Chemical mapping of a 177-nucleotide RNA with 2A3 and DMS. Conditions: 150 mM KOAc, 10 mM MgCl2 and 150 mM bicine (pH 8.5), 24 C. The 2A3 profile rests on 1,010 reads. Reactivities are given for positions 27 through 126. It was measured as part of the RMDB library OK2TST.
RNA sequence: GGGAACGACUCGAGUAGAGUCGAAAAGGAUAAAUCUUCAUCUUUAAUCACGAUACCUUUCAGGCUAAGGUGUGAAAAAUCGUAACCACCAUUUACUGUCUGUGGGAUUUCGAUAGUAUUAUUAUGACAUCCAUCGCAUGUUCGCAUGCGAUGGAUGAAAAGAAACAACAACAACAAC
Reactivity to 2A3 in 0.01 (KOAc 150mM, MgCl2 10mM, bicine 150mM(pH8.5), 24C), signal-to-noise 2, nucleotides 027 to 126: g090g010a100u060a170a150a060u020c030u160u060c030a060u020c070u000u160u050a040a000u010c010a010c060g000a050u040a080c010c000u060u140u100c010a000g000g050c000u000a040a040g000g000u040g020u030g200a060a060a020a070a080u230c090g040u080a000a050c030c040a000c010c000a050u080u040u140a150c170u010g030u080c020u020g000u000g020g050g020a080u020u070u000c050g010a040u040a060g050u060a000u020u040a050u000u100a050u060g050a000
Reactivity to DMS in 0.01 (KOAc 150mM, MgCl2 10mM, bicine 150mM(pH8.5), 24C), signal-to-noise 1, nucleotides 027 to 126: g000g000a050u000a070a080a090u000c070u000u000c020a030u000c060u000u000u020a060a050u000c020a120c060g020a020u010a090c020c010u010u000u010c030a040g040g050c010u000a120a040g010g000u000g000u000g010a050a100a100a140a120u020c140g000u030a070a150c110c000a090c040c020a120u000u000u000a050c210u000g010u000c050u000g040u000g000g020g000a140u000u000u000c020g030a040u000a050g010u000a010u000u000a040u000u010a040u000g020a200